[RMDB]
RNA sequence: GGGAACGACUCGAGUAGAGUCGAAAAUAAUAAGAUUGGAUUCUGGACUCAUUCCAUACUAAAUGAAGAGGGAUCUCAAUAUCCUACAGCAACUCCUACCUCAGAACCCUGGUUUCAGCCUGUCCUAAACACACAAAUGGUUCGCCAUUUGUGUGUUAAAAGAAACAACAACAACAAC
Reactivity to DMS in 0.01 (KOAc 150mM, MgCl2 10mM, bicine 150mM(pH8.5), 24C), signal-to-noise 2, nucleotides 027 to 126: u010a090a130u010a120a100g000a090u000u010g000g000a060u000u000c000u000g000g000a300c100u000c020a040u000u000c110c120a080u000a090c170u010a040a090a060u000g000a040a020g000a280g020g000g010a050u000c030u020c070a050a050u020a090u000c010c020u000a040c100a080g010c040a040a080c130u010c020c000u000a060c030c000u000c080a060g000a120a080c030c030c020u010g010g000u000u010u000c050a060g010c010c040u000g000u000c030c030u010a050
Reactivity to 2A3 in 0.01 (KOAc 150mM, MgCl2 10mM, bicine 150mM(pH8.5), 24C), signal-to-noise 1, nucleotides 027 to 126: u160a020a020u050a000a040g040a080u000u040g000g000a000u030u040c010u060g070g100a050c000u000c040a010u120u000c070c040a070u100a270c050u190a150a070a050u050g000a000a020g030a050g020g070g030a030u000c190u050c110a010a040u000a050u090c020c010u030a030c040a060g050c040a040a040c040u000c040c000u010a030c010c020u010c030a000g030a070a050c000c010c010u030g000g000u000u060u050c000a020g030c010c010u020g010u030c000c020u060a090